[RMDB]
Conditions: 150 mM KOAc, 10 mM MgCl2 and 150 mM bicine (pH 8.5), 24 C. An RNA of 177 nucleotides, treated with 2A3 and read out base by base. For 2A3 the reverse transcriptase was SuperScript II with manganese.
RNA sequence: GGGAACGACUCGAGUAGAGUCGAAAAUGAGCUGCCACGCACCGAGAGGCGUGCCCACACACACACACACGCACACGCACCGUCUUCAUGAGGGAGUGCGAAAGAGUAAGAAGGGAAUCGGUGAAUCGGAGGCUGAGUGCUUCGGCACUCAGCCUCCAAAAGAAACAACAACAACAAC
Reactivity to 2A3 in 0.01 (KOAc 150mM, MgCl2 10mM, bicine 150mM(pH8.5), 24C), signal-to-noise 1, nucleotides 027 to 126: u050g000a000g000c000u000g090c150c000a030c020g070c030a000c000c000g080a000g040a040g170g090c030g060u010g050c120c000c000a090c000a000c000a000c000a000c000a000c000a090c000a020c000g010c020a010c010a000c090g030c000a050c000c000g100u030c000u150u140c030a220u130g000a020g060g150g000a250g040u060g060c070g030a190a000a000g140a000g100u130a040a050g010a010a000g010g000g000a010a030u120c100g090g000u030g060a000a100u140c050